[RMDB]
RNA sequence: GGGAACGACUCGAGUAGAGUCGAAAAGAAGAGCAGGCAGAUAAUCUUGUGCAGUAUGCAUGCUCUUAACUCCACACGAAGGAAGGCAGCAAAAGAAUAACUGCCACUGCACAAGUGGAGCCGCAGACCCACGGAUCAUAUUCGUAUGAUCCGUGGGAAAAGAAACAACAACAACAAC
Reactivity to DMS in 0.01 (KOAc 150mM, MgCl2 10mM, bicine 150mM(pH8.5), 24C), signal-to-noise 2, nucleotides 027 to 126: g010a090a030g000a000g020c020a000g000g020c000a080g020a180u040a040a040u030c030u010u000g000u030g000c000a040g040u000a080u000g000c040a030u010g010c000u000c000u030u000a090a110c080u000c000c000a090c150a090c290g000a100a170g020g050a140a130g030g020c010a010g060c190a050a060a090a160g000a190a060u020a060a160c020u000g000c000c000a110c040u000g030c030a040c000a000a070g000u020g030g000a040g040c000c080g040c140a040g000a140
Reactivity to 2A3 in 0.01 (KOAc 150mM, MgCl2 10mM, bicine 150mM(pH8.5), 24C), signal-to-noise 4, nucleotides 027 to 126: g140a000a010g000a000g010c030a030g010g000c000a000g020a160u170a170a110u190c020u020u020g010u030g000c030a020g030u080a100u140g000c000a010u020g000c000u030c000u010u000a010a010c000u010c000c010a060c010a020c130g120a070a040g050g020a010a080g000g000c000a000g000c010a030a110a140a020g190a120a100u130a110a030c000u000g000c000c000a000c000u000g000c010a000c000a010a000g020u020g020g040a000g020c000c000g050c060a010g050a150